[RMDB]
The record gives the reactivity of an RNA of 177 nucleotides to 2A3 and DMS. The reactions ran in a buffer of 150 mM KOAc, 10 mM MgCl2 and 150 mM bicine (pH 8.5), at 24 C. For DMS, 138,048 sequencing reads were counted.
RNA sequence: GGGAACGACUCGAGUAGAGUCGAAAAGCUAGAGCGUUGUCGUGGCUGCGAAGCGGUCGAUUAGGCCGGAUAUGCGACGUCAGUUUGAUCCUGACCGGCCUAAGGAUCUUACUGGUGCUCUAGGAAAGGGUAGUUCGCGGUUCGCUGCGGAUUGCCCAAAAGAAACAACAACAACAAC
Reactivity to 2A3 in 0.01 (KOAc 150mM, MgCl2 10mM, bicine 150mM(pH8.5), 24C), signal-to-noise 9, nucleotides 027 to 126: g060c010u010a000g000a000g000c020g060u080u130g030u060c010g010u020g060g010c040u030g000c040g040a060a020g040c000g000g010u010c010g030a140u050u130a070g000g000c010c030g010g020a110u150a040u200g050c030g010a000c000g030u040c000a010g000u000u030u030g010a010u010c000c000u020g030a070c040c020g020g000c000c000u010a030a020g000g000a000u000c000u000u020a010c000u010g010g030u090g010c000u000c000u000a010g010g030a060a080a050
Reactivity to DMS in 0.01 (KOAc 150mM, MgCl2 10mM, bicine 150mM(pH8.5), 24C), signal-to-noise 9, nucleotides 027 to 126: g010c000u000a000g000a010g010c010g020u020u010g010u000c010g020u010g000g010c020u000g000c080g010a110a110g020c010g000g010u000c010g010a150u030u040a090g000g010c000c000g000g000a230u030a060u030g010c030g010a020c010g000u020c010a010g010u000u000u000g000a020u000c010c000u000g010a150c060c020g000g000c010c010u000a090a020g000g000a010u000c000u000u000a010c010u000g000g010u020g010c000u000c000u000a010g000g010a060a090a130